[RMDB]
RNA sequence: GGGAACGACUCGAGUAGAGUCGAAAAUUUAAGAGCGUAGAUGUCUCUGUCACGAUACGAGUAAGUGACUCUCGUGAACUACUGACGAAUGAGACAGAGACAUUUAUGCUCAGUGUCAGUCAAGGAACUAACUGAUCCCUUUCGAGGGAUCAGUUAGAAAAGAAACAACAACAACAAC
Reactivity to DMS in 0.01 (KOAc 150mM, MgCl2 10mM, bicine 150mM(pH8.5), 24C), signal-to-noise 2, nucleotides 027 to 126: u010u010u010a150a130g010a010g010c000g030u000a030g010a010u000g000u000c000u000c000u000g010u010c000a140c060g030a080u010a070c020g000a060g010u000a030a100g020u000g010a090c060u000c140u000c150g000u010g010a080a040c040u000a030c020u010g000a130c070g000a100a070u000g010a110g010a000c000a010g000a030g000a000c000a000u000u000u000a010u000g000c000u000c000a040g000u000g000u010c080a110g010u000c120a050a080g010g020a130a180
Reactivity to 2A3 in 0.01 (KOAc 150mM, MgCl2 10mM, bicine 150mM(pH8.5), 24C), signal-to-noise 2, nucleotides 027 to 126: u220u190u120a170a040g010a000g000c020g010u010a000g000a010u000g010u010c000u000c000u010g000u000c010a000c130g040a040u060a140c000g000a010g010u010a130a180g030u100g210a120c020u040c010u070c060g130u140g110a080a040c020u160a020c010u070g110a040c030g070a120a060u100g000a040g000a080c010a000g000a000g000a030c010a010u010u000u000a000u000g000c000u000c000a000g000u010g010u030c030a010g000u030c100a090a020g070g080a110a030
Structure probing data (DMS and 2A3) for a 177-nucleotide construct.
The RNA was probed in 150 mM KOAc, 10 mM MgCl2 and 150 mM bicine (pH 8.5) at 24 C.
For 2A3, 1,389 sequencing reads were counted.
For DMS the reverse transcriptase was MarathonRT.
Reactivities are rounded to 0.1 and cut off at 0 and 3.
For DMS, 2,085 sequencing reads were counted.